[RMDB]
RNA sequence: GGGAACGACUCGAGUAGAGUCGAAAAGUAUCCAUGUUCGCAUGGAUACGAAAUAUGCGCGCGUAUAUCCGGUUGGCUGGAUGCGCGCGUCUGGCUGGCCCGUGGUGCUAGUCUUCGGACUAGCAAAUUCUCUCCACAUAUUCGUAUGUGGAGAGAAAAAAGAAACAACAACAACAAC
Reactivity to 2A3 in 0.01 (KOAc 150mM, MgCl2 10mM, bicine 150mM(pH8.5), 24C), signal-to-noise 3, nucleotides 027 to 126: g000u010a000u000c000c000a010u000g030u030u060c230g010c150a010u010g000g020a000u000a000c000g000a010a010a000u300a060u080g000c030g000c010g020c010g020u030a100u020a020u220c020c020g050g060u220u270g300g110c040u050g020g000a000u000g000c000g010c000g000c000g010u020c000u020g070g000c040u050g050g010c010c000c000g010u110g060g060u050g020c000u010a010g000u000c000u020u020c190g070g000a000c000u000a010g000c000a030a000a000
Reactivity to DMS in 0.01 (KOAc 150mM, MgCl2 10mM, bicine 150mM(pH8.5), 24C), signal-to-noise 4, nucleotides 027 to 126: g010u000a000u000c000c000a010u000g000u000u020c190g030c010a000u000g000g000a010u000a000c000g000a060a080a110u010a050u010g000c020g010c010g020c000g010u000a060u010a140u010c010c000g010g000u010u010g010g010c030u010g010g010a020u000g010c000g010c020g000c010g010u000c050u000g010g020c140u010g020g000c010c010c030g010u010g010g020u000g000c000u000a010g000u000c010u000u010c160g030g000a020c000u000a000g000c000a020a040a100